[RMDB]
RNA sequence: GGGAACGACUCGAGUAGAGUCGAAAAAAGGGCCCAGAGGGGAAUGAGCCUCGUCGUCGACGAAGGGGUGCAUUCCGAAGAGCUGGCCUGGCGUCGUCCGGCUCCCUCGACCGCACCGGAGCGCUAGCUCGAUCUUAAUCUUCGGAUUAAGAUCGAGAAAAGAAACAACAACAACAAC
Reactivity to 2A3 in 0.01 (KOAc 150mM, MgCl2 10mM, bicine 150mM(pH8.5), 24C), signal-to-noise 3, nucleotides 027 to 126: a000a000g090g000g000c100c140c040a020g060a030g060g260g000g010a010a030u020g000a010g030c000c010u000c000g040u010c010g030u050c140g090a300c080g010a080a020g050g000g000g000u040g020c000a000u000u000c000c000g020a110a020g030a040g030c030u030g000g000c010c010u030g000g010c020g000u080c020g130u020c020c000g010g000c030u020c000c000c000u070c060g130a150c080c070g010c070a030c010c000g010g010a020g020c020g000c040u040a040g030
Reactivity to DMS in 0.01 (KOAc 150mM, MgCl2 10mM, bicine 150mM(pH8.5), 24C), signal-to-noise 4, nucleotides 027 to 126: a060a070g000g020g000c070c020c050a070g000a110g020g010g000g000a010a010u000g000a250g000c000c000u000c000g000u000c010g020u010c280g000a130c040g000a040a050g000g000g010g020u000g010c020a020u000u000c000c010g030a140a120g010a120g000c030u000g000g010c030c000u000g010g010c010g000u000c080g000u000c010c010g010g010c200u000c020c010c000u010c150g010a080c130c080g010c130a120c020c020g000g010a070g000c020g000c030u000a110g010
The data come from the RNA Mapping Database (RMDB), library VIROID. This 177-nucleotide RNA was probed chemically with 2A3 and DMS. For DMS the reverse transcriptase was MarathonRT. The reactions ran in a buffer of 150 mM KOAc, 10 mM MgCl2 and 150 mM bicine (pH 8.5), at 24 C. 2A3 adducts were read by reverse transcription with SuperScript II with manganese.